The data come from the RNA Mapping Database (RMDB), library OK3TST. The record gives the reactivity of an RNA of 207 nucleotides to DMS and 2A3. The RNA was probed in 150 mM KOAc, 10 mM MgCl2 and 150 mM bicine (pH 8.5) at 24 C. The DMS profile rests on 2,087 reads. Values are in units of 0.01, from 0 to 300, in steps of 10. Reactivities are given for positions 27 through 156. For DMS the reverse transcriptase was MarathonRT. 2A3 adducts were read by reverse transcription with SuperScript II with manganese.
RNA sequence: GGGAACGACUCGAGUAGAGUCGAAAAUAGAAAAUUAGUUAUUUUCAGGCCAGGUGCAGUGGCUCACACCUGUAAUUCCAGCACUUUGGGAGGCUGAGGCAGGCAGAUCAGUUGAGCUCAGGAGUUCAAGACCAGCCUGGGCAACAUGGCAAAACCAAAUUUAUACGAGUUUCGACUCGUAUAAAUUAAAAGAAACAACAACAACAAC
Reactivity to DMS in 0.01 (KOAc 150mM, MgCl2 10mM, bicine 150mM(pH8.5), 24C), signal-to-noise 1, nucleotides 027 to 156: u020a120g000a020a040a080a090u000u010a200g000u010u000a150u000u000u000u000c040a120g000g000c040c030a020g000g030u000g020c040a150g070u010g000g010c020u000c030a020c020a020c000c000u010g000u020a020a110u010u010c050c020a130g000c040a040c020u020u000u010g010g030g010a040g020g030c010u000g010a070g020g040c040a040g040g050c040a090g000a040u010c050a070g060u010u000g020a150g020c010u000c000a070g000g000a170g010u010u010c050a070a070g000a050c030c030a240g000c010c000u000g030g000g040c000a040a070c010a040u000g000g020c010a040a040a120a180c000c010a060
Reactivity to 2A3 in 0.01 (KOAc 150mM, MgCl2 10mM, bicine 150mM(pH8.5), 24C), signal-to-noise 1, nucleotides 027 to 156: u110a010g030a000a060a000a040u140u100a050g140u140u180a120u110u070u040u000c040a050g010g020c000c000a010g000g030u120g030c120a020g050u150g030g000c000u040c030a010c070a040c010c020u050g050u030a050a210u080u030c020c000a000g020c050a030c080u170u150u070g100g030g040a030g050g010c050u020g010a060g020g020c000a000g020g000c020a010g000a140u070c010a000g040u060u090g030a010g000c000u000c050a000g000g030a020g000u160u200c080a060a030g040a050c010c000a000g030c000c030u000g000g030g020c020a060a000c010a040u020g010g000c000a010a130a000a000c100c020a020